[RMDB]
RNA sequence: GGGAACGACUCGAGUAGAGUCGAAAAAUGGACAAUUUUGAUGAAGGAUGCAUCACAGUUCUCGAGGAGACUGCAGAACGACAUAUGCUCUGGGAAUUAGACCUACUGAGAUCCCUCGAAGGCGACACAUCGGGGGUAGUUUCGACUACCCCCGAUGAAAAGAAACAACAACAACAAC
Reactivity to DMS in 0.01 (KOAc 150mM, MgCl2 10mM, bicine 150mM(pH8.5), 24C), signal-to-noise 2, nucleotides 027 to 126: a080u000g000g000a070c070a100a070u000u000u010u020g000a030u000g000a280a130g020g030a130u020g070c090a020u000c070a150c120a050g010u010u000c020u010c030g030a120g030g000a160g000a080c050u030g020c100a050g000a060a070c040g000a160c090a090u000a050u030g000c000u000c020u000g000g000g020a080a020u020u010a090g020a060c020c000u020a000c030u000g000a080g010a060u020c030c000c010u000c090g040a080a010g000g010c030g000a120c130a220
Reactivity to 2A3 in 0.01 (KOAc 150mM, MgCl2 10mM, bicine 150mM(pH8.5), 24C), signal-to-noise 2, nucleotides 027 to 126: a000u150g090g000a000c010a130a090u000u100u070u150g070a110u030g000a040a090g040g010a030u090g030c020a000u020c010a080c040a100g060u180u000c030u040c080g060a030g080g000a090g010a020c030u060g000c030a000g120a160a010c080g040a010c060a040u170a030u210g030c010u000c000u070g040g000g000a050a000u120u020a030g010a000c000c000u000a010c000u000g060a030g030a120u020c010c000c000u020c020g020a010a070g020g000c020g100a070c020a010